An RNA of 177 nucleotides, treated with DMS and 2A3 and read out base by base. For DMS the reverse transcriptase was MarathonRT.
[RMDB]
RNA sequence: GGGAACGACUCGAGUAGAGUCGAAAAUCAUCACCAGGCCCGUAUCUUCCUGCGGGAAGAAGCUGCGUGGCAAUGUCAUGAACGACCACACAGACCCCAGAAAACUCAGCACGAAAAGCAGCAUCAACGUAGGGUAGUGAUUCGUCACUACCCUACGAAAAGAAACAACAACAACAAC
Reactivity to DMS in 0.01 (KOAc 150mM, MgCl2 10mM, bicine 150mM(pH8.5), 24C), signal-to-noise 2, nucleotides 027 to 126: u000c070a050u000c050a100c040c070a130g000g010c020c000c030g000u000a100u020c010u000u000c000c000u010g040c160g050g000g000a020a000g000a040a090g000c110u010g000c030g020u010g000g040c090a100a050u010g020u000c080a090u000g000a100a100c090g000a050c040c030a000c030a040c000a070g030a130c020c010c010c040a140g020a070a050a070a070c050u020c040a070g000c040a050c070g010a060a040a100a090g000c020a070g010c030a060u000c110a030a200
Reactivity to 2A3 in 0.01 (KOAc 150mM, MgCl2 10mM, bicine 150mM(pH8.5), 24C), signal-to-noise 1, nucleotides 027 to 126: u040c000a020u050c000a000c030c080a010g130g000c010c000c080g040u060a080u100c010u020u020c000c000u050g040c210g040g000g030a000a030g040a020a040g140c100u040g000c020g080u100g000g000c010a010a080u180g020u020c050a110u090g040a020a060c070g060a100c020c000a010c030a000c000a020g120a100c000c000c060c010a010g060a010a050a000a000c040u040c090a000g010c060a000c010g070a020a060a090a000g060c010a000g010c030a010u090c050a010a110